[RMDB]
RNA sequence: GGGAACGACUCGAGUAGAGUCGAAAAGAUAUGGAGCUAGGGAGCGGUGGUUCGGAAACGAACCUUCGCGAAGAACUAGUCUCCUAAGUCAAAGGUUUCUCAAGUGGUUCGCCACUUGAGAAACCAACCUCACCAAUUAGUUCGCUAAUUGGUGAGGAAAAGAAACAACAACAACAAC
Reactivity to 2A3 in 0.01 (KOAc 150mM, MgCl2 10mM, bicine 150mM(pH8.5), 24C), signal-to-noise 1, nucleotides 027 to 126: g010a010u030a040u110g000g000a010g010c010u000a010g010g010g030a080g010c000g000g030u000g020g010u010u000c000g030g000a040a020a030c010g000a010a010c000c000u010u030c000g000c000g060a150a030g020a000a010c000u010a010g150u140c020u020c010c000u020a060a000g010u000c040a150a020a100g020g000u010u010u000c010u010c000a010a000g000u000g060g090u070u160c300g040c130c010a000c000u000u010g010a000g000a000a000a000c000c000a000a000
Reactivity to DMS in 0.01 (KOAc 150mM, MgCl2 10mM, bicine 150mM(pH8.5), 24C), signal-to-noise 2, nucleotides 027 to 126: g010a020u010a240u010g000g010a010g010c020u000a020g010g000g000a060g030c000g000g000u000g000g000u010u000c000g010g010a040a040a120c000g010a010a000c000c000u000u000c000g020c000g010a110a110g000a120a220c050u000a020g010u010c000u000c000c000u010a010a100g000u000c020a100a140a170g020g010u000u000u000c000u010c000a020a000g000u000g000g000u000u020c260g010c010c000a020c000u000u000g010a010g000a000a010a000c000c000a020a030